[RMDB]
RNA sequence: GGGAACGACUCGAGUAGAGUCGAAAAAUAAACCACCACCAGCGCGACCUGGUCCACCACGAGCUGGUCGGCGGCCUCGCGCGCUCCCGCCACCACCGCGACCACCACCUCGCGCAGGUACAAAAAAACACAUUGUAUACUUCGGUAUACAAUGUGUAAAAGAAACAACAACAACAAC
Reactivity to DMS in 0.01 (KOAc 150mM, MgCl2 10mM, bicine 150mM(pH8.5), 24C), signal-to-noise 3, nucleotides 027 to 126: a060u010a030a110a260c070c010a140c150c090a080c030c020a030g010c000g020c020g000a040c080c110u000g010g000u000c070c090a120c110c040a050c040g020a090g000c130u000g010g030u000c140g020g000c040g010g010c060c050u000c110g000c050g000c010g020c020u000c060c010c010g020c010c030a060c030c020a020c040c010g000c040g000a050c080c180a040c030c020a050c040c070u010c010g040c050g020c040a030g010g010u000a050c080a000a000a090a040a080a080
Reactivity to 2A3 in 0.01 (KOAc 150mM, MgCl2 10mM, bicine 150mM(pH8.5), 24C), signal-to-noise 2, nucleotides 027 to 126: a000u130a020a070a020c020c020a020c030c020a010c010c010a020g000c000g000c000g020a050c010c030u040g000g020u020c010c050a130c030c010a060c100g060a070g050c190u000g000g030u060c060g010g000c020g010g000c000c040u080c050g040c020g000c000g030c080u030c020c000c010g000c010c000a020c000c010a000c010c000g030c040g020a000c000c010a020c080c010a040c000c010u030c000g030c000g010c030a010g010g000u050a020c070a000a210a040a020a000a000